Chemical mapping of a 177-nucleotide RNA with 2A3 and DMS. The reactions ran in a buffer of 150 mM KOAc, 10 mM MgCl2 and 150 mM bicine (pH 8.5), at 24 C. The DMS profile rests on 1,030 reads. Reactivities are given for positions 27 through 126. The data come from the RNA Mapping Database (RMDB), library OK2TST. For DMS the reverse transcriptase was MarathonRT.

RNA sequence: GGGAACGACUCGAGUAGAGUCGAAAACUACAGGAUAUCACGCGUUUUCCUAUGAAUGUUGGGAGGCUUGGGGGACCUGUGAACAAAGCGCAAGUUACGCCCAACCCUUUCACGCCUAAGGAACCUGUCAACGUGAGGAGUUCGCUCCUCACGUUGAAAAAGAAACAACAACAACAAC
Reactivity to 2A3 in 0.01 (KOAc 150mM, MgCl2 10mM, bicine 150mM(pH8.5), 24C), signal-to-noise 2, nucleotides 027 to 126: c040u060a040c010a010g010g100a050u070a030u300c110a080c170g160c080g000u050u010u120u050c010c000u080a090u070g140a300a070u110g090u300u020g030g010g000a030g000g020c010u000u010g000g000g010g010g000a000c000c010u020g030u010g000a210a040c040a110a120a010g100c020g000c000a040a000g010u000u030a220c120g240c010c000c000a000a040c010c000c060u010u040u020c020a000c010g020c000c000u060a080a050g000g000a030a040c040c000u090g030
Reactivity to DMS in 0.01 (KOAc 150mM, MgCl2 10mM, bicine 150mM(pH8.5), 24C), signal-to-noise 1, nucleotides 027 to 126: c050u000a070c050a020g000g000a130u000a040u000c080a120c170g000c200g000u000u000u000u000c000c030u000a100u000g020a120a040u040g000u000u020g020g000g010a020g010g010c210u020u000g010g000g030g010g000a000c010c010u000g060u000g000a020a120c250a090a170a170g010c060g000c020a000a000g000u000u010a120c110g000c010c010c010a020a020c300c020c000u000u010u010c000a040c010g000c060c060u010a130a060g000g010a020a080c070c020u000g010